[RMDB]
Chemical mapping of a 177-nucleotide RNA with 2A3 and DMS. DMS adducts were read by reverse transcription with MarathonRT. For DMS, 6,538 sequencing reads were counted. It was measured as part of the RMDB library M2PK50.
RNA sequence: GGGAACGACUCGAGUAGAGUCGAAAAACGCGAGGAUUCGUCCUCGCGUACAUAAGUGAGUUCGCCGGAUAGCUGCCUAAGUGAGUUCGCGGGAUAGCUGCCAAGCACAUAGUUUCGACUAUGUGAACCUACAAAAAGUGUUCGCACUUUUUGUAGGAAAAGAAACAACAACAACAAC
Reactivity to 2A3 in 0.01 (KOAc 150mM, MgCl2 10mM, bicine 150mM(pH8.5), 24C), signal-to-noise 5, nucleotides 027 to 126: a010c010g010c010g000a010g010g010a030u030u050c180g060u010c070c000u000c000g000c000g000u020a000c000a070u190a040a060g060u030g140a080g030u030u050c040g030c060c000g020g010a090u050a050g020c040u060g030c030c030u070a120a040g030u020g110a100g070u100u140c060g000c040g060g000g030a110u070a050g000c030u040g030c000c010a040a010g090c010a010c000a000u000a000g000u010u070u090c200g080a010c010u000a000u000g000u000g010a030a050
Reactivity to DMS in 0.01 (KOAc 150mM, MgCl2 10mM, bicine 150mM(pH8.5), 24C), signal-to-noise 5, nucleotides 027 to 126: a020c000g020c000g010a000g000g010a040u000u010c200g030u000c000c000u000c000g010c010g010u000a010c110a080u010a070a110g010u010g010a100g030u000u000c040g020c020c040g010g010a100u000a120g020c030u000g010c050c050u000a070a150g020u010g010a120g030u000u000c040g030c110g000g000g000a070u000a060g020c020u010g010c030c050a100a120g010c010a000c000a010u000a010g010u000u000u010c230g000a040c000u000a000u000g000u000g010a060a100